Conditions: 150 mM KOAc, 10 mM MgCl2 and 150 mM bicine (pH 8.5), 24 C. The record gives the reactivity of an RNA of 177 nucleotides to DMS and 2A3. It was measured as part of the RMDB library OK2TRN.
RNA sequence: GGGAACGACUCGAGUAGAGUCGAAAAGCAAGUCUUAUACUAAGCUUAUUAUUACUAGGAUUAGUAGUCAAGUGGUAAGACAUAACUCUUUCAAUGUUACCAUCGCAGGUUCGAAUCCUGCCUAGUCUAGUAGGAAUCAGUUCGCUGAUUCCUACUAAAAAGAAACAACAACAACAAC
Reactivity to DMS in 0.01 (KOAc 150mM, MgCl2 10mM, bicine 150mM(pH8.5), 24C), signal-to-noise 5, nucleotides 027 to 126: g010c110a110a170g000u000c030u010u000a040u000a080c060u000a100a190g020c030u000u010a070u000u010a060u000u010a080c090u000a040g010g010a110u000u000a010g010u000a010g020u000c250a050a080g010u000g010g020u010a000a030g010a020c010a060u010a090a130c040u000c110u000u000u000c080a080a110u010g010u000u000a060c020c020a080u010c190g000c010a010g000g000u000u000c170g000a300a120u010c000c000u000g010c000c200u000a040g010u010c150
Reactivity to 2A3 in 0.01 (KOAc 150mM, MgCl2 10mM, bicine 150mM(pH8.5), 24C), signal-to-noise 3, nucleotides 027 to 126: g030c020a030a060g010u020c050u120u200a080u010a080c040u090a050a050g020c000u070u000a030u220u010a060u030u110a140c030u020a030g130g040a220u110u040a010g040u000a000g040u070c050a090a040g010u020g110g020u040a050a000g020a030c020a020u100a030a030c030u030c010u120u180u110c110a110a140u090g030u040u080a060c000c000a020u080c060g010c010a000g000g000u050u020c030g030a030a030u050c010c000u000g000c020c010u060a040g050u030c000
The 2A3 profile rests on 2,583 reads. Reactivities are rounded to 0.1 and cut off at 0 and 3. DMS adducts were read by reverse transcription with MarathonRT.